Structure probing data (DMS and 2A3) for a 207-nucleotide construct. For 2A3, 1,391 sequencing reads were counted. For DMS the reverse transcriptase was MarathonRT. Values cover nucleotides 27 to 156. 2A3 adducts were read by reverse transcription with SuperScript II with manganese.

RNA sequence: GGGAACGACUCGAGUAGAGUCGAAAAAACUCAUCUUUUUGCUUUCUCUUAUUUGGAACAGUUAUUCAGCUUACCCUAAGUCCAGAGUGAAUUUCCAAAAAAUCAAAGGUUCUGCAACUUUUCAUUUCUCUUCAAUUCCAACUCAGGUUCACACGUACACCUGGUAAAUAUUCGUAUUUACCAGGUGAAAAGAAACAACAACAACAAC
Reactivity to DMS in 0.01 (KOAc 150mM, MgCl2 10mM, bicine 150mM(pH8.5), 24C), signal-to-noise 1, nucleotides 027 to 156: a110a040c010u010c060a140u000c020u010u000u010u000u010g020c040u000u000u060c040u000c060u000u010a130u000u000u010g000g010a060a120c090a090g010u000u000a110u000u000c020a110g000c050u000u000a070c050c040c030u010a070a110g020u010c060c010a100g030a120g020u000g000a120a060u010u000u000c030c010a000a020a040a070a030a080u010c020a060a060a120g030g010u000u000c020u000g000c080a020a050c000u000u000u020u000c040a060u010u000u000c040u000c040u000u010c030a030a110u000u000c020c000a040a070c060u010c000a060g060g000u010u010c050a050c050a080c060g000u000a180
Reactivity to 2A3 in 0.01 (KOAc 150mM, MgCl2 10mM, bicine 150mM(pH8.5), 24C), signal-to-noise 3, nucleotides 027 to 156: a020a010c090u080c080a110u100c050u030u050u040u090u070g030c010u000u060u040c010u010c010u060u140a160u150u090u100g030g010a060a020c020a080g030u080u090a060u120u100c020a010g030c030u030u110a130c000c000c040u040a050a020g030u000c020c020a020g030a030g100u040g030a050a110u030u040u080c020c000a080a060a040a070a010a040u120c060a140a040a010g030g000u060u060c020u070g070c050a040a070c020u080u030u050u080c010a070u020u120u060c040u010c000u090u030c040a080a160u090u050c050c040a030a080c040u030c060a030g060g040u120u090c140a060c010a000c250g050u280a010